[RMDB]
RNA sequence: GGGAACGACUCGAGUAGAGUCGAAAAAUGUUGCCAACUUCCAAAAAUCAGGUUAUAGUAAAUAUGUCACUGUUCAGGGACCACCUGGCACUGGCAAAAGUCAUUUUGCUAUAGGGUUAGCGAUUUAGAUUCAUAAACCGUUCGCGGUUUAUGAAUCAAAAGAAACAACAACAACAAC
Reactivity to DMS in 0.01 (KOAc 150mM, MgCl2 10mM, bicine 150mM(pH8.5), 24C), signal-to-noise 1, nucleotides 027 to 126: a090u010g010u010u010g020c010c040a120a070c020u010u000c010c030a000a090a120a070a070u020c080a080g010g010u000u000a010u000a000g010u000a020a020a080u000a090u010g010u010c000a010c080u000g030u000u000c010a020g010g010g000a280c240c190a120c030c010u000g000g010c000a030c070u000g000g010c010a010a050a050a070g000u010c210a030u000u000u000u010g020c000u000a010u000a060g000g000g010u000u000a100g000c090g010a030u000u000u000a050
An RNA of 177 nucleotides, treated with DMS and read out base by base. The data come from the RNA Mapping Database (RMDB), library 15KREP. For DMS, 827 sequencing reads were counted.